[RMDB]
RNA sequence: GGGAACGACUCGAGUAGAGUCGAAAACGCUCUAGCCGCUUAAGGCUUAAGCCUCGAAACUGCUUGUGUCCGUGCUCGCAGCGUAGAGUCAUCAUCACGGAACCGCUGAGACGUGGCCGUCUGCCCACCCUUGGUUAAAUCUAGCAGACUGGUUUCCGUUUCUGUCAAGGUUCGCCUUGACAGAAACAAAAGAAACAACAACAACAAC
Reactivity to 2A3 in 0.01 (KOAc 150mM, MgCl2 10mM, bicine 150mM(pH8.5), 24C), signal-to-noise 1, nucleotides 027 to 156: c040g010c010u000c030u020a000g010c010c000g030c200u300u220a250a080g000g000c000u010u000a020a000g000c010c020u000c020g060a020a000a020c010u000g000c010u010u020g000u000g010u020c000c000g000u000g000c020u010c020g060c020a000g000c000g040u020a000g000a020g070u030c010a180u130c030a030u130c000a000c010g000g000a000a010c000c000g000c010u030g010a020g000a040c030g010u010g000g010c020c030g000u000c000u000g000c000c000c000a010c010c000c000u000u000g000g030u030u050a020a030a020u200c130u160a060g000c000a000g000a020c010u020g060g030u000u030u000c010c040